[RMDB]
RNA sequence: GGGAACGACUCGAGUAGAGUCGAAAAAAUUAGAGGCAAUUUGAAAUAAUUUAAAUUAGCUCAACCCUACUGCACUUACCGAACUAGAUAACGGUGUAUUAGGGGUAAAUUCUCCGCAUUCGGUGCGCAACCACCUGAGGUUUCGACCUCAGGUGAACAAGUAAUCUCGAUUCGUCGAGAUUACUUGAAAAGAAACAACAACAACAAC
Reactivity to DMS in 0.01 (KOAc 150mM, MgCl2 10mM, bicine 150mM(pH8.5), 24C), signal-to-noise 1, nucleotides 027 to 156: a120a100u010u000a090g000a090g010g030c000a030a040u010u010u010g010a040a110a180u010a140a140u000u010u000a000a000a040u010u000a110g010c010u030c020a100a080c000c010c000u000a000c110u000g020c000a030c000u010u010a060c040c010g000a110a160c190u010a100g010a110u000a040a090c110g020g020u010g040u010a030u020u000a010g000g050g010g000u010a030a060a090u000u010c010u000c040c020g020c040a190u030u000c020g000g020u040g020c020g030c100a070a110c060c000a020c010c000u010g010a020g000g010u010u000u000c280g000a060c000c000u000c010a000g000g000u010g000a000a080
Reactivity to 2A3 in 0.01 (KOAc 150mM, MgCl2 10mM, bicine 150mM(pH8.5), 24C), signal-to-noise 2, nucleotides 027 to 156: a010a010u180u080a080g040a080g040g040c020a010a000u010u010u040g080a110a110a140u260a110a140u120u060u100a030a020a000u040u010a050g000c010u000c010a000a040c000c000c000u000a000c010u010g000c010a000c000u050u060a050c070c040g040a120a050c010u060a140g050a170u110a240a070c060g000g000u010g000u000a000u000u010a000g020g000g000g000u000a020a020a000u040u010c010u000c000c000g000c010a020u020u060c090g110g000u010g000c030g010c020a050a100c090c010a000c000c000u000g000a000g020g030u010u070u130c170g100a030c000c000u000c000a000g000g000u000g010a000a000

The record gives the reactivity of an RNA of 207 nucleotides to DMS and 2A3. The 2A3 profile rests on 1,563 reads. For 2A3 the reverse transcriptase was SuperScript II with manganese. For DMS, 2,105 sequencing reads were counted.